[RMDB]
RNA sequence: GGGAACGACUCGAGUAGAGUCGAAAAGCAAGAACCCAUCAAGGAUGCCUUGAUGUUAUUCCAGAGACUCCAGGAAAAGAGAAUGUUGGAGGAAAGCAAUCUGUCCUUCCUGAAGGAGCUGCUCUUCCGAAUUAAUAGACUGGAUUUGCUGAUUACCGUAGAACGUCUAAUUCGUUAGACGUUCUACAAAAGAAACAACAACAACAAC
Reactivity to 2A3 in 0.01 (KOAc 150mM, MgCl2 10mM, bicine 150mM(pH8.5), 24C), signal-to-noise 4, nucleotides 027 to 156: g010c020a020a050g020a110a060c030c030c000a010u000c000a000a020g060g050a260u160g150c010c000u000u010g000a000u010g010u030u050a100u100u040c030c020a010g020a010g030a130c050u000c030c030a030g090g120a020a080a070a050g090a010g030a100a110u130g060u170u100g040g000a020g010g020a030a060a000g020c020a020a110u030c060u190g120u040c000c000u040u090c020c080u140g080a030a010g000g010a020g030c020u020g000c000u000c040u040u010c010c010g020a020a020u080u050a090a070u060a070g120a140c010u010g000g020a020u020u010u060g010c010u010g040a140u120u110a070c030c030
Reactivity to DMS in 0.01 (KOAc 150mM, MgCl2 10mM, bicine 150mM(pH8.5), 24C), signal-to-noise 2, nucleotides 027 to 156: g010c050a120a060g000a070a080c030c140c000a080u000c020a040a030g030g030a180u000g020c090c000u000u000g000a040u000g000u000u010a030u010u010c010c020a160g000a260g050a150c020u000c020c010a140g010g000a080a050a090a140g010a160g000a160a080u000g010u000u000g010g030a180g010g030a060a070a080g000c030a070a080u000c070u020g010u000c010c010u010u000c130c120u000g000a040a040g010g010a110g020c030u000g020c060u000c050u000u000c010c020g030a100a070u000u000a050a160u010a100g000a180c030u000g020g010a100u000u000u000g000c040u000g020a160u010u000a110c070c220